[RMDB]
RNA sequence: GGGAACGACUCGAGUAGAGUCGAAAACUUCGAACCCGGCAGGGAGGCCCAGAUGUUAUUGACCUUUGCCACGGCUUCGCGGAUCCGGCCCGCGUCAAUAUCCGCCAGCGCUUUACGCUCGCUGAUCUGCUGGAGGGCGAUCUGGUCCUGUGACGCCUAUGUACGUUACUUUCGAGUAACGUACAUAAAAAGAAACAACAACAACAAC
Reactivity to DMS in 0.01 (KOAc 150mM, MgCl2 10mM, bicine 150mM(pH8.5), 24C), signal-to-noise 1, nucleotides 027 to 156: c080u000u010c010g000a090a300c040c030c030g010g020c020a130g020g020g000a050g000g030c090c000c030a100g010a120u000g030u000u010a060u000u000g010a070c070c070u000u000u010g000c020c020a090c060g000g050c060u000u000c030g040c010g040g000a060u000c060c060g000g010c030c050c050g020c060g040u000c030a040a070u010a050u010c000c060g020c020c050a050g000c020g050c040u010u000u000a050c020g000c050u010c110g000c050u010g010a060u000c070u010g040c010u000g000g010a100g020g000g000c110g000a070u000c060u000g010g010u000c010c030u000g010u020g040a110c050g010c030c060
Reactivity to 2A3 in 0.01 (KOAc 150mM, MgCl2 10mM, bicine 150mM(pH8.5), 24C), signal-to-noise 3, nucleotides 027 to 156: c020u150u110c050g040a110a110c010c010c020g030g000c060a060g000g030g040a010g030g030c020c010c000a030g010a100u090g060u180u090a150u090u180g100a180c030c000u110u090u160g050c050c040a050c050g050g000c010u040u050c050g000c020g030g010a050u060c050c000g060g000c020c010c000g010c000g030u020c030a050a070u040a040u180c000c020g010c030c030a010g010c020g040c060u160u230u210a090c050g010c010u030c010g000c000u020g000a040u030c010u090g020c030u070g030g050a070g050g010g010c040g030a060u040c020u050g010g010u010c000c010u050g020u050g030a000c030g000c000c000
This 207-nucleotide RNA was probed chemically with DMS and 2A3. For DMS, 3,824 sequencing reads were counted. For 2A3, 1,872 sequencing reads were counted. For 2A3 the reverse transcriptase was SuperScript II with manganese. Values cover nucleotides 27 to 156. Values are in units of 0.01, from 0 to 300, in steps of 10.